[RMDB]
RNA sequence: GGGAACGACUCGAGUAGAGUCGAAAACGUGCACGAUACUCCCAGGAUUACACAGGCGAAAAUAUCAGGAAGCUGGAAGCUGCUAAAUCCCAGCUACGAGAGUUCAAUAACAUCCGUGGAUCAGCGGUGGAAGAACUUACUUCGGUAAGUUCUUCCAAAAAGAAACAACAACAACAAC
Reactivity to DMS in 0.01 (KOAc 150mM, MgCl2 10mM, bicine 150mM(pH8.5), 24C), signal-to-noise 1, nucleotides 027 to 126: c180g010u000g010c090a120c060g000a100u000a130c080u030c000c000c000a110g010g010a090u000u000a050c100a090c050a090g030g000c130g010a060a120a080a100u010a050u000c060a050g020g000a210a110g030c020u060g040g000a130a100g030c080u000g000c260u000a060a050a140u000c020c020c030a070g000c050u000a040c090g000a050g000a180g000u000u000c090a100a140u010a090a100c160a040u010c050c010g000u010g010g000a150u010c000a070g000c040g000g010